[RMDB]
RNA sequence: GGGAACGACUCGAGUAGAGUCGAAAAGACCUCUAGAUGCGAUUGUAGACUGUUACAGCAUCUGCUAUCAGUCUGAGAUAGCUCAGGAUAGCUGGAGCUAUCUGCAACGGUGCAGACUCCAGUGACACCGUGAACAAUCGUUCAUGUCACAGAGGAGGUCCUAUUUUAUCUUCGGAUAAAAUAGGACAAAAGAAACAACAACAACAAC
Reactivity to DMS in 0.01 (KOAc 150mM, MgCl2 10mM, bicine 150mM(pH8.5), 24C), signal-to-noise 3, nucleotides 027 to 156: g010a130c010c000u000c020u000a090g010a110u000g000c000g000a060u000u010g030u010a030g010a080c050u000g010u000u010a030c080a070g020c090a190u000c090u000g040c020u000a040u000c000a060g000u000c070u000g010a100g010a050u000a030g000c010u000c030a110g010g010a170u010a180g010c050u020g010g010a030g030c030u000a030u000c010u010g010c030a090a090c070g010g010u010g010c030a060g000a150c020u010c050c040a110g020u000g010a100c040a050c050c040g000u000g020a150a060c010a080a030u000c050g020u010u010c050a070u010g020u000c030a100c090a100g000a070g030g020a140g010
Reactivity to 2A3 in 0.01 (KOAc 150mM, MgCl2 10mM, bicine 150mM(pH8.5), 24C), signal-to-noise 8, nucleotides 027 to 156: g040a040c010c000u000c020u040a070g010a070u050g010c000g010a010u010u010g000u030a010g000a020c020u010g060u140u200a100c080a060g040c040a160u130c180u210g000c000u020a030u060c010a020g040u020c030u050g010a010g010a050u050a020g000c010u020c030a040g090g060a230u150a120g110c030u070g050g020a010g000c020u030a020u030c000u020g020c020a070a070c080g070g030u040g010c010a010g020a130c020u030c020c010a020g020u000g060a030c000a010c020c030g040u030g050a020a000c010a000a010u020c010g020u090u110c070a080u140g080u100c030a030c050a140g030a020g010g000a000g040

Structure probing data (DMS and 2A3) for a 207-nucleotide construct.
It was measured as part of the RMDB library OK3TST.
For 2A3 the reverse transcriptase was SuperScript II with manganese.
Conditions: 150 mM KOAc, 10 mM MgCl2 and 150 mM bicine (pH 8.5), 24 C.